The data come from the RNA Mapping Database (RMDB), library OK3TST. Chemical mapping of a 207-nucleotide RNA with 2A3 and DMS. For DMS, 3,101 sequencing reads were counted. Conditions: 150 mM KOAc, 10 mM MgCl2 and 150 mM bicine (pH 8.5), 24 C. High DMS reactivity at an A or C suggests that its Watson-Crick edge is free. For 2A3 the reverse transcriptase was SuperScript II with manganese.
RNA sequence: GGGAACGACUCGAGUAGAGUCGAAAAUGGGUACAAUAACUGCAAAAGAUUGAGGAGCAGGAACUAUCUAAAUAACCAUGGUGGCUGGGUGCAGUGACUCAUGCCGGUAAUCCCAGCACUUUGGGAGGCUGAGGUGGGAAGAUUGCUUGAGCCCAGACAUAUACGUGGGGUUCGCCCCACGUAUAUGAAAAGAAACAACAACAACAAC
Reactivity to 2A3 in 0.01 (KOAc 150mM, MgCl2 10mM, bicine 150mM(pH8.5), 24C), signal-to-noise 3, nucleotides 027 to 156: u040g000g030g000u060a050c070a100a050u140a160a060c030u070g020c030a050a010a150a090g090a220u110u160g020a060g060g010a010g000c010a000g020g010a010a020c010u030a080u150c070u070a110a090a130u080a130a020c020c010a040u080g010g040u050g050g070c030u010g000g040g030u060g030c030a000g060u030g100a030c020u020c150a050u100g050c040c000g030g040u030a040a030u040c010c000c000a000g040c020a060c030u080u110u000g010g000g000a020g020g040c070u030g030a010g060g020u050g010g050g010a020a060g050a050u020u110g020c020u060u090g020a010g000c000c000c000a000g010a020
Reactivity to DMS in 0.01 (KOAc 150mM, MgCl2 10mM, bicine 150mM(pH8.5), 24C), signal-to-noise 2, nucleotides 027 to 156: u000g000g000g010u000a080c020a040a050u010a060a140c030u020g000c000a090a130a160a200g010a160u000u000g020a120g020g010a270g000c020a050g000g000a080a060c040u000a090u000c020u000a040a060a040u010a060a140c040c050a050u000g030g000u000g000g030c050u000g020g000g050u010g010c170a090g000u010g020a090c080u000c070a060u000g020c000c000g000g010u000a070a120u000c030c020c000a090g010c070a010c110u000u010u020g020g020g020a040g010g030c070u030g010a060g000g040u010g000g000g010a140a120g000a090u000u000g030c000u000u000g000a180g000c010c000c000a110g020a220